Chemical mapping of a 177-nucleotide RNA with 2A3 and DMS.
RNA sequence: GGGAACGACUCGAGUAGAGUCGAAAAAUAAAGAGUUUCCAGGAACGAAAUAGGAACCAUAAGACUAGAAUAGGUGGUUCCUAUUUGGUUGACUUAACAAUUCCCUAGGAACCUGGAUGCAAAAAAAGAUAAUGUAAUGGUUCGCCAUUACAUUAUCAAAAGAAACAACAACAACAAC
Reactivity to 2A3 in 0.01 (KOAc 150mM, MgCl2 10mM, bicine 150mM(pH8.5), 24C), signal-to-noise 3, nucleotides 027 to 126: a000u170a010a090a020g070a010g010u020u060u000c010c010a010g000g020a020a010c050g020a020a000a010u000a010g000g010a000a000c000c010a020u050a120a110g150a140c140u130a080g210a300a180u150a170g170g000u020g000g000u010u000c000c000u000a000u000u000u000g020g000u010u030g040a050c020u050u030a020a000c020a030a140u010u030c000c000c000u010a050g090g020a090a060c000c000u000g010g030a020u050g010c030a010a140a150a070a030a010a000
Reactivity to DMS in 0.01 (KOAc 150mM, MgCl2 10mM, bicine 150mM(pH8.5), 24C), signal-to-noise 4, nucleotides 027 to 126: a080u020a050a080a060g020a110g010u000u020u000c010c000a000g000g010a090a030c000g010a000a020a010u000a010g000g010a010a000c010c010a020u010a090a110g020a200c150u000a120g000a160a120u010a080g020g020u000g010g010u000u000c000c000u000a000u000u000u010g010g030u000u010g010a090c040u010u000a040a090c130a080a150u010u000c000c000c000u010a150g010g010a060a230c010c010u000g000g000a070u020g020c090a010a000a060a060a040a070a070

Values cover nucleotides 27 to 126. The RNA was probed in 150 mM KOAc, 10 mM MgCl2 and 150 mM bicine (pH 8.5) at 24 C. The 2A3 profile rests on 6,649 reads.